[RMDB]
RNA sequence: GGGAACGACUCGAGUAGAGUCGAAAAUGCUGGCCAUCGUGAACGCGCUGGUGGAGAACAAGGCCAUCCGCGGCGACGAGGCCGGGCUGGUGUACAACGCGCUGCUGGAGCGCGUGGCCCGCUACAACAGCACCAACGUGCAGACGAACCUGGACCGCGUGUUAUGUUCUUUCGAGAACAUAACACGAAAAGAAACAACAACAACAAC
Reactivity to 2A3 in 0.01 (KOAc 150mM, MgCl2 10mM, bicine 150mM(pH8.5), 24C), signal-to-noise 4, nucleotides 027 to 156: u150g000c040u050g000g000c000c010a300u010c010g020u000g080a170a030c010g010c000g000c030u010g010g000u010g020g000a090g080a170a080c150a170a040g180g000c000c000a000u000c020c010g010c020g050g010c020g010a020c000g010a010g010g000c010c000g000g020g000c020u010g030g040u060g010u050a110c090a110a020c080g010c000g030c010u110g010c070u180g160g100a010g010c000g000c010g000u000g000g010c000c000c010g000c000u060a050c030a120a010c010a020g000c010a010c030c010a040a030c060g030u090g020c030a010g030a090c070g030a050a030c020c010u020g010g060a020c020c030g020
Reactivity to DMS in 0.01 (KOAc 150mM, MgCl2 10mM, bicine 150mM(pH8.5), 24C), signal-to-noise 2, nucleotides 027 to 156: u000g060c020u000g040g050c060c010a070u010c040g020u000g010a100a120c020g020c010g030c040u000g000g000u010g000g000a110g030a090a170c270a150a290g040g000c000c010a060u000c000c000g030c000g020g010c040g060a080c040g000a300g040g000c020c020g040g020g110c010u010g010g000u010g030u000a070c010a070a070c030g000c020g040c000u020g010c140u000g020g020a040g030c000g020c030g010u010g010g000c020c010c040g050c010u000a110c040a050a070c040a050g000c020a090c050c040a070a150c130g020u030g020c010a140g000a150c020g010a050a060c010c060u000g020g030a100c060c050g020